Annotation:
This 207-nucleotide RNA was probed chemically with 2A3. The data come from the RNA Mapping Database (RMDB), library OK3TST.
RNA sequence: GGGAACGACUCGAGUAGAGUCGAAAAACGUACGCCAUCCGAAACGUACGGUAAGUCUACAGGAUGGGAAAGCAUGCGACGUAUCCAUCAUAAGAUCAGGAGCUCACAGGCACGGAUGGGAAAGCAUGCUGCAAUAGCCUGUCCAUCCGAAACGUACAGUACGAGCGUAUUUCGAUACGCUCGUACUAAAAGAAACAACAACAACAAC
Reactivity to 2A3 in 0.01 (KOAc 150mM, MgCl2 10mM, bicine 150mM(pH8.5), 24C), signal-to-noise 1, nucleotides 027 to 156: a000c000g010u000a000c000g080c010c000a010u010c030c000g090a120a230a000c000g030u000a030c000g000g000u140a070a000g000u070c030u080a030c190a060g000g030a000u010g040g000g000a170a000a000g000c040a000u020g000c020g120a050c060g060u030a090u090c020c000a010u020c070a020u090a280a140g140a190u160c100a070g030g130a100g020c020u060c100a100c000a030g000g000c000a010c020g030g010a000u000g000g000g130a000a070a000g000c000a000u000g010c000u000g000c010a060a060u000a080g000c000c000u020g030u000c000c000a000u000c000c000g180a190a190a020c070g010u070a120c080
Reactivities are given for positions 27 through 156.